[RMDB]
RNA sequence: GGGAACGACUCGAGUAGAGUCGAAAAUUUGUGAAAAUUCUGAGAAUUGUUUCCAAUUCACAAUAUGGCAAUAUCCUAGAAUAAUGAACAGGAACUCUGUGCAAUGGCAUUGGAGCUUGUGGCAUUGGACUACACCAUUGUUCGCAAUGGUGUAGUCAAAAGAAACAACAACAACAAC
Reactivity to 2A3 in 0.01 (KOAc 150mM, MgCl2 10mM, bicine 150mM(pH8.5), 24C), signal-to-noise 1, nucleotides 027 to 126: u000u000u010g010u010g030a120a100a140a060u090u020c120u150g070a080g060a210a060u080u060g050u070u170u040c050c000a010a000u030u040c000a000c000a020a090u050a130u090g090g000c030a060a120u010a030u010c000c000u000a010g080a070a040u180a080a040u040g000a030a000c000a060g030g050a120a050c090u050c020u030g010u030g000c000a000a280u200g070g030c010a010u000u090g070g030a080g000c000u020u000g030u030g210g000c020a050u030u030g060
Reactivity to DMS in 0.01 (KOAc 150mM, MgCl2 10mM, bicine 150mM(pH8.5), 24C), signal-to-noise 1, nucleotides 027 to 126: u010u000u010g000u000g010a000a060a040a060u000u030c160u010g000a160g000a030a140u010u050g010u010u000u010c020c030a000a180u000u000c020a020c000a000a050u000a060u000g010g020c130a070a070u010a110u000c030c020u010a060g010a100a070u010a060a020u000g000a130a050c020a000g000g000a070a040c050u010c050u000g020u000g070c010a130a140u000g030g020c010a020u000u010g010g000a010g050c010u010u000g000u000g010g020c020a050u000u010g000
About this RNA:
An RNA of 177 nucleotides, treated with 2A3 and DMS and read out base by base. DMS adducts were read by reverse transcription with MarathonRT. The RNA was probed in 150 mM KOAc, 10 mM MgCl2 and 150 mM bicine (pH 8.5) at 24 C. It was measured as part of the RMDB library RFMREP. For 2A3, 543 sequencing reads were counted.